Structure probing data (2A3 and DMS) for a 177-nucleotide construct. For 2A3, 988 sequencing reads were counted. Conditions: 150 mM KOAc, 10 mM MgCl2 and 150 mM bicine (pH 8.5), 24 C. Values cover nucleotides 27 to 126.
[RMDB]
RNA sequence: GGGAACGACUCGAGUAGAGUCGAAAACCAAGGGACGUGCGACGGAGUCCCGGGAGCGACGGUUACCAACAAACAAGCCUCCAUCGCACCGCAUGAAUUUUCACGCGGCCCUAUCACGGGAGAGAACCUCGUUAAUGUUCUUCGGAACAUUAACGAGAAAAGAAACAACAACAACAAC
Reactivity to 2A3 in 0.01 (KOAc 150mM, MgCl2 10mM, bicine 150mM(pH8.5), 24C), signal-to-noise 1, nucleotides 027 to 126: c000c010a090a060g040g000g000a100c200g030u050g020c010g000a010c030g040g050a040g000u000c130c010c000g000g000g000a060g000c070g070a050c060g040g010u060u050a110c080c030a110a080c040a110a090a060c030a050a040g030c000c010u000c010c010a020u000c010g010c000a020c000c000g010c010a020u110g100a160a160u190u160u140u220c000a010c040g060c000g000g110c000c020c010u160a180u150c020a060c080g020g010g000a050g000a000g010a040a030c000
Reactivity to DMS in 0.01 (KOAc 150mM, MgCl2 10mM, bicine 150mM(pH8.5), 24C), signal-to-noise 1, nucleotides 027 to 126: c010c000a200a050g040g010g070a060c180g020u010g010c020g040a020c020g020g030a110g020u000c020c000c000g000g000g010a050g050c070g010a070c100g000g000u010u000a090c100c090a140a190c150a080a100a100c150a130a120g010c080c000u000c000c000a030u000c000g050c010a150c030c000g030c000a140u000g050a030a220u000u000u020u000c000a030c080g030c030g000g000c030c020c020u080a030u010c040a130c090g000g000g000a130g020a160g000a190a130c140